[RMDB]
RNA sequence: GGGAACGACUCGAGUAGAGUCGAAAAAGUCAUCCGGGCCGAAGGGUUGAGACGCACCCACAGACGGGAGCCUCCAGGAGGGUUUGAGGAGAACUCACCUCCAGAGGACCCCUUCAGCGAACAGAGGUAGGGGACAGCUUCGGCUGUCCCAAAAGAAACAACAACAACAAC
Reactivity to DMS in 0.01 (KOAc 150mM, MgCl2 10mM, bicine 150mM(pH8.5), 24C), signal-to-noise 1, nucleotides 027 to 129: a000g030u040c070a020u030c040c070g020g020g000c060c060g080a120a120g020g030g000u030u060g030a040g040a070c000g060c080a120c030c010c000a230c160a300g040a000c210g000g030g130a070g020c000c000u030c050c000a080g020g020a060g000g000g000u050u000u120g000a100g000g000a210g050a100a170c000u000c000a140c060c020u000c000c050a080g000a000g000g030a090c090c010c000c010u030u030c000a050g020c120g020a180a090c000a080g030a010g060g000u090a030g080
Reactivity to 2A3 in 0.01 (KOAc 150mM, MgCl2 10mM, bicine 150mM(pH8.5), 24C), signal-to-noise 2, nucleotides 027 to 129: a000g010u020c000a020u040c020c000g000g010g000c000c030g000a020a000g010g000g010u010u070g070a040g000a080c060g030c040a030c010c010c010a050c070a030g060a010c040g000g040g010a060g020c000c000u000c000c040a100g040g000a010g000g000g040u000u180u230g050a010g020g090a150g080a120a090c010u010c010a040c000c000u000c010c000a000g000a000g020g000a020c040c020c030c000u000u080c030a030g040c030g070a050a020c020a020g010a060g000g120u100a000g040

Chemical mapping of a 170-nucleotide RNA with DMS and 2A3. It was measured as part of the RMDB library 15KLIB. DMS adducts were read by reverse transcription with MarathonRT. High DMS reactivity at an A or C suggests that its Watson-Crick edge is free.